[RMDB]
RNA sequence: GGGAACGACUCGAGUAGAGUCGAAAACUUCUUGUUCAACUGCUUUACGGCUUAAAAUGACUCUAUUAUUUUCAGGAUCCAAUUCUUCAACUUUAAUACGAAUUGUUUGUCCAUCAAACACAGAGAAAAUAUCGUGGGAAUUCGUUCCCACGAUAUUAAAAGAAACAACAACAACAAC
Reactivity to 2A3 in 0.01 (KOAc 150mM, MgCl2 10mM, bicine 150mM(pH8.5), 24C), signal-to-noise 1, nucleotides 027 to 126: c010u050u000c000u020u160g090u070u050c070a090a020c030u020g000c000u050u050u210a040c120g000g000c000u070u170a020a170a020a100u190g020a020c020u000c000u070a070u130u030a100u040u170u010u010c060a040g050g000a050u000c000c000a020a080u000u000c010u080u120c020a040a110c070u250u170u160a120a040u070a090c120g020a050a030u000u000g040u100u090u030g010u000c030c010a090u140c060a050a050a050c030a000c010a120g080a000g030a170a190
Reactivity to DMS in 0.01 (KOAc 150mM, MgCl2 10mM, bicine 150mM(pH8.5), 24C), signal-to-noise 2, nucleotides 027 to 126: c080u000u010c050u000u010g000u010u000c070a130a130c080u000g000c050u010u010u010a110c100g020g020c040u000u000a070a070a090a130u000g000a070c020u000c030u010a050u000u000a130u000u000u000u000c150a060g020g020a050u000c170c100a030a090u010u000c020u000u000c090a070a040c090u000u000u010a030a050u000a110c080g000a040a040u000u010g000u000u000u000g020u000c130c030a080u000c140a020a020a080c060a090c190a070g020a220g040a100a040